[RMDB]
RNA sequence: GGGAACGACUCGAGUAGAGUCGAAAAAAGGAAUUAGCGUGCCUUCAUGCUAAGGGUUUGAUAUCUGCUAAAACCCGGUGCAUUCAUCAAUGCAGGUUAAGCGAAAGGGAUGUCCCGACCGGAGGCCAAAAGUUCGCUACGUUCGCGUAGCGAACAACUACUUUGAAGUCUUCGGACUUCAAAGUAGAAAAGAAACAACAACAACAAC
Reactivity to DMS in 0.01 (KOAc 150mM, MgCl2 10mM, bicine 150mM(pH8.5), 24C), signal-to-noise 1, nucleotides 027 to 156: a090a030g030g010a130a170u000u000a150g050c000g000u010g000c020c000u010u010c050a040u000g010c070u000a260a140g010g010g000u000u000u000g000a190u000a030u000c060u010g050c050u000a130a020a010a020c030c000c050g070g000u000g020c020a080u000u020c090a090u000c080a060a160u000g010c000a070g050g010u020u000a050a090g010c010g010a090a050a080g020g010g000a120u000g000u010c040c000c000g000a150c030c060g040g010a050g020g020c000c020a000a150a120a090g020u000u000c000g010c000u000a000c010g030u000u000c300g050c080g070u000a000g040c000g000a000a020c000a040a130
Reactivity to 2A3 in 0.01 (KOAc 150mM, MgCl2 10mM, bicine 150mM(pH8.5), 24C), signal-to-noise 2, nucleotides 027 to 156: a000a000g160g020a100a040u080u030a130g060c080g060u040g000c040c010u070u050c030a060u080g000c020u030a000a080g000g010g010u000u060u040g060a070u050a080u090c080u110g020c060u040a070a070a000a070c000c000c010g000g010u020g020c020a060u010u140c050a110u080c060a150a070u070g000c000a000g070g110u080u150a220a030g090c060g110a180a020a020g010g010g000a000u050g000u050c050c000c000g000a010c010c040g000g000a020g000g030c020c000a050a140a050a000g010u000u010c000g050c030u000a020c000g010u020u020c230g000c010g100u000a000g020c000g000a000a010c000a000a000

This 207-nucleotide RNA was probed chemically with DMS and 2A3. Values cover nucleotides 27 to 156. The DMS profile rests on 2,249 reads. Conditions: 150 mM KOAc, 10 mM MgCl2 and 150 mM bicine (pH 8.5), 24 C.